[RMDB]
RNA sequence: GGGAACGACUCGAGUAGAGUCGAAAAAUGGAAUAGGGUGAGGCUGUGACAAUGAACUACGCCUCUGUUUUAGCCAAUUGAUGCUACUUUCGAAACUGCCCCAUCGGUUGUCGAGUGGUCAAACCGGUCUAGUCCUCCGAUUCGUCGGAGGACUAGAAAAAGAAACAACAACAACAAC
Reactivity to DMS in 0.01 (KOAc 150mM, MgCl2 10mM, bicine 150mM(pH8.5), 24C), signal-to-noise 1, nucleotides 027 to 126: a080u010g000g030a070a060u000a060g030g000g000u020g010a050g010g000c020u010g030u020g010a140c120a080a180u010g020a070a090c090u000a070c150g040c000c000u000c010u000g000u000u000u000u000a150g000c050c030a070a100u000u010g000a030u000g000c000u000a070c080u000u000u000c060g000a010a070a210c130u000g050c190c000c000c020a130u000c040g010g000u000u000g000u000c020g000a110g010u010g020g010u020c100a020a030a100c080c040g000g040
Description: Structure probing data (DMS) for a 177-nucleotide construct. Reactivities are given for positions 27 through 126.